[RMDB]
RNA sequence: GGGAACGACUCGAGUAGAGUCGAAAAGAUAUGGAGGCAAUAGACAUGAGCCGAAGCAACGAUGAAAUAAAUCGGAAACGAUUUAUGGAGUUGUGAUAGCUGCUCAACAGCUAUUGCCUCCUAAGUCCAUCCCAUAUACCUUCGGGUAUAUGGGAUGAAAAGAAACAACAACAACAAC
Reactivity to 2A3 in 0.01 (KOAc 150mM, MgCl2 10mM, bicine 150mM(pH8.5), 24C), signal-to-noise 2, nucleotides 027 to 126: g040a060u130a080u280g010g010a000g000g000c000a010a000u030a020g110a130c090a160u100g010a010g020c030c040g060a020a000g000c000a010a010c000g300a300u110g030a020a020a040u020a010a010a000u010c020g020g030a080a050a060c020g000a000u000u030u000a010u020g000g020a050g000u030u020g010u010g030a070u120a070g070c130u060g000c000u020c010a050a250c070a200g040c020u010a010u010u020g000c010c000u000c000c000u000a010a010g000u000c010
Reactivity to DMS in 0.01 (KOAc 150mM, MgCl2 10mM, bicine 150mM(pH8.5), 24C), signal-to-noise 4, nucleotides 027 to 126: g000a090u000a300u000g000g020a010g010g020c000a020a030u000a030g010a060c140a260u010g000a010g010c010c230g000a150a190g010c040a120a020c000g010a050u010g000a260a200a020u000a000a000a010u000c000g010g010a120a100a200c030g010a010u000u000u000a010u000g000g000a300g000u000u010g010u010g020a140u000a170g010c100u000g020c010u000c040a020a080c300a120g000c000u010a000u000u000g000c000c010u010c000c000u000a020a100g000u000c030